[RMDB]
Overview
This 177-nucleotide RNA was probed chemically with 2A3 and DMS. The DMS profile rests on 1,889 reads. For DMS the reverse transcriptase was MarathonRT. The RNA was probed in 150 mM KOAc, 10 mM MgCl2 and 150 mM bicine (pH 8.5) at 24 C.
RNA sequence: GGGAACGACUCGAGUAGAGUCGAAAACUGAGAGACACUGUCAGUCUGUCUGACACACUGUGUCACUGAGUGUCUGUGAGUGUGAGACACACUGAGUGACUGAGAGUGUCUCUGAGACACUGACUCAACUACUUCUACGCUUCGGCGUAGAAGUAGUAAAAGAAACAACAACAACAAC
Reactivity to 2A3 in 0.01 (KOAc 150mM, MgCl2 10mM, bicine 150mM(pH8.5), 24C), signal-to-noise 3, nucleotides 027 to 126: c010u080g040a000g000a010g000a020c000a000c020u040g190u170c000a000g000u020c000u090g150u070c050u010g010a000c000a000c010a050c140u200g030u030g020u110c000a010c020u040g050a020g030u030g000u000c020u060g140u110g130a160g100u260g050u070g090a030g020a010c000a000c010a010c050u070g050a030g210u140g010a000c000u010g000a010g010a000g010u000g010u000c000u000c000u010g010a000g000a000c060a010c080u060g170a060c010u000c060a060
Reactivity to DMS in 0.01 (KOAc 150mM, MgCl2 10mM, bicine 150mM(pH8.5), 24C), signal-to-noise 2, nucleotides 027 to 126: c020u020g020a060g000a030g010a040c020a010c000u010g000u010c000a030g030u000c030u000g030u000c140u000g010a000c010a030c020a100c220u000g030u000g020u010c010a100c060u010g000a100g020u000g000u010c000u000g020u030g010a160g020u000g000u000g020a090g000a010c020a000c000a090c010u000g010a170g010u000g020a020c000u000g000a010g010a010g020u010g000u020c000u000c020u000g020a040g010a120c180a090c160u000g000a110c080u000c030a170